[RMDB]
The data come from the RNA Mapping Database (RMDB), library RFMREP. Chemical mapping of a 177-nucleotide RNA with DMS and 2A3. The 2A3 profile rests on 9,954 reads. The reactions ran in a buffer of 150 mM KOAc, 10 mM MgCl2 and 150 mM bicine (pH 8.5), at 24 C.
RNA sequence: GGGAACGACUCGAGUAGAGUCGAAAAGAGGACCGAACAGGUGAACGUUGAAAAGUUCUCUGAUGAGCUGAGGGUAGGAGUGAAAGGCUAAUCAAACCCCGUGAUAGCUGGUUCUCUUCGAAAUGCACUUACAACAAUAGUUCGCUAUUGUUGUAAGAAAAGAAACAACAACAACAAC
Reactivity to DMS in 0.01 (KOAc 150mM, MgCl2 10mM, bicine 150mM(pH8.5), 24C), signal-to-noise 8, nucleotides 027 to 126: g010a030g020g010a020c010c000g020a140a150c030a040g010g000u010g010a020a020c010g010u010u020g000a110a090a120a190g010u000u000c000u000c000u010g010a150u010g010a070g010c010u010g010a090g020g010g010u000a060g000g000a040g010u000g000a100a090a160g010g020c040u010a050a080u000c040a050a070a080c020c000c010c240g010u010g000a070u000a040g000c020u000g010g010u000u000c010u000c000u000u000c070g010a050a070a070u010g010c170a160
Reactivity to 2A3 in 0.01 (KOAc 150mM, MgCl2 10mM, bicine 150mM(pH8.5), 24C), signal-to-noise 6, nucleotides 027 to 126: g010a000g000g010a000c020c030g030a130a040c010a020g040g040u120g060a000a000c020g030u110u250g090a080a090a040a070g010u010u000c010u000c010u020g130a210u100g070a020g000c050u040g030a110g030g020g000u040a030g010g100a030g010u050g080a230a110a010g170g000c040u070a030a010u030c020a060a060a130c010c000c010c000g010u030g050a080u120a070g020c030u020g030g000u020u000c000u000c000u030u010c010g060a040a050a040u120g010c030a030